[RMDB]
RNA sequence: GGGAACGACUCGAGUAGAGUCGAAAAGGAAAGUAAAGAAAGCAACGGGGCUAGCAGACGGAUGUUCCGCCCCCCGGCGGGGCCGAGUGAGGCUUAUCCCGGGGAUCGGCGAAUCGUCCCGGGAUGGCACCCUAUUACACUUCGGUGUAAUAGGGUGAAAAGAAACAACAACAACAAC
Reactivity to DMS in 0.01 (KOAc 150mM, MgCl2 10mM, bicine 150mM(pH8.5), 24C), signal-to-noise 2, nucleotides 027 to 126: g010g000a080a060a060g000u000a060a090a090g010a120a100a080g010c060a070a080c100g030g000g010g010c110u000a090g010c090a060g020a130c080g000g000a050u000g000u000u000c020c040g010c010c010c030c020c030c090g010g010c120g000g000g000g000c050c040g000a090g020u020g020a130g010g010c030u000u000a030u030c070c000c010g010g010g010g010a040u000c090g010g010c050g000a010a060u000c030g020u000c000c000c040g000g010g000a020u010g000g000
Reactivity to 2A3 in 0.01 (KOAc 150mM, MgCl2 10mM, bicine 150mM(pH8.5), 24C), signal-to-noise 1, nucleotides 027 to 126: g050g040a100a020a030g020u140a130a020a070g050a090a140a010g090c000a000a110c030g000g000g050g010c070u040a020g030c020a000g070a100c050g060g040a060u100g050u080u030c000c000g000c020c000c000c030c010c000g030g000c100g020g050g030g020c000c010g010a050g090u200g070a030g000g080c000u050u050a020u040c000c000c040g030g040g000g000a030u110c080g030g020c060g060a080a050u040c010g020u010c010c050c050g000g010g000a030u030g040g000
Chemical mapping of a 177-nucleotide RNA with DMS and 2A3. The DMS profile rests on 1,982 reads. The 2A3 profile rests on 1,111 reads. 2A3 adducts were read by reverse transcription with SuperScript II with manganese.